[RMDB]
Conditions: 150 mM KOAc, 10 mM MgCl2 and 150 mM bicine (pH 8.5), 24 C.
An RNA of 207 nucleotides, treated with 2A3 and read out base by base.
For 2A3, 1,892 sequencing reads were counted.
RNA sequence: GGGAACGACUCGAGUAGAGUCGAAAAUCCUAAGUCGUCUGGAGGGACGCGUAGGCUAUGAAGUACAUCGGAAACGAUGUAUGGAGCCUACUGAAUGUCCCUAUGAAGGACGAUAUGGAAAAAGGGUCCUCUGAUGGUUCGCCAUCAGAGGACCCAAGCGUAUUAUAGUCUUCGGACUAUAAUACGCAAAAGAAACAACAACAACAAC
Reactivity to 2A3 in 0.01 (KOAc 150mM, MgCl2 10mM, bicine 150mM(pH8.5), 24C), signal-to-noise 2, nucleotides 027 to 156: u000c000c000u020a090a010g030u010c000g000u000c010u040g050g030a010g020g000g000a000c010g000c050g030u000a000g010g000c010u050a130u300g020a040a000g000u000a000c000a000u010c010g010g050a030a000a110c010g000a010u000g000u000a000u030g000g010a000g010c000c000u000a000c000u020g020a020a090u270g010u000c000c000c000u000a070u020g000a000a000g020g000a000c000g000a000u010a070u110g020g010a030a060a100a200a150g010g030g000u040c000c000u040c010u010g030a010u060g000g110u100u110c300g020c120c000a000u010c000a000g010a000g000g000a000c000c000c000a000a000